[RMDB]
RNA sequence: GGGAACGACUCGAGUAGAGUCGAAAAGAUAUGGAUUCGAUAAGUAGGGAGAACAACAGCUCGGAAACGAGACAUGUUCGAACUACUUUUGACGAAUCCUAAGUCAAAAGGGACGUUCGCGUCCCAACGAAGUCAUAUUCUUCGGAAUAUGACUUCGAAAAGAAACAACAACAACAAC
Reactivity to 2A3 in 0.01 (KOAc 150mM, MgCl2 10mM, bicine 150mM(pH8.5), 24C), signal-to-noise 3, nucleotides 027 to 126: g040a000u070a050u170g000g000a000u020u000c000g010a030u000a050a020g000u010a010g000g000g030a090g000a010a010c000a040a020c040a060g050c000u000c020g010g050a060a070a060c010g020a000g060a050c020a080u090g000u000u000c000g000a000a000c000u010a000c000u010u010u010u020g030a020c020g000a000a000u000c000c000u000a090a030g070u020c050a000a000a060a210g000g000g000a010c010g010u050u090c270g020c010g120u000c000c000c000a000a000
Reactivity to DMS in 0.01 (KOAc 150mM, MgCl2 10mM, bicine 150mM(pH8.5), 24C), signal-to-noise 5, nucleotides 027 to 126: g010a060u000a300u020g000g000a020u000u000c000g010a080u000a020a030g020u000a010g000g000g020a300g000a020a010c010a010a070c290a120g020c000u010c000g020g010a080a080a220c000g010a020g010a030c080a170u010g010u000u000c000g000a300a190c010u000a000c000u000u000u000u000g010a150c140g000a020a010u000c000c000u000a010a110g000u000c030a040a030a100a100g010g000g010a020c020g030u000u010c160g010c030g010u000c000c000c010a020a070

Chemical mapping of a 177-nucleotide RNA with 2A3 and DMS.
For DMS the reverse transcriptase was MarathonRT.
The 2A3 profile rests on 9,825 reads.
It was measured as part of the RMDB library TTRDEL.
The reactions ran in a buffer of 150 mM KOAc, 10 mM MgCl2 and 150 mM bicine (pH 8.5), at 24 C.
2A3 is a SHAPE reagent: it acylates the 2'-hydroxyl of flexible nucleotides of all four kinds.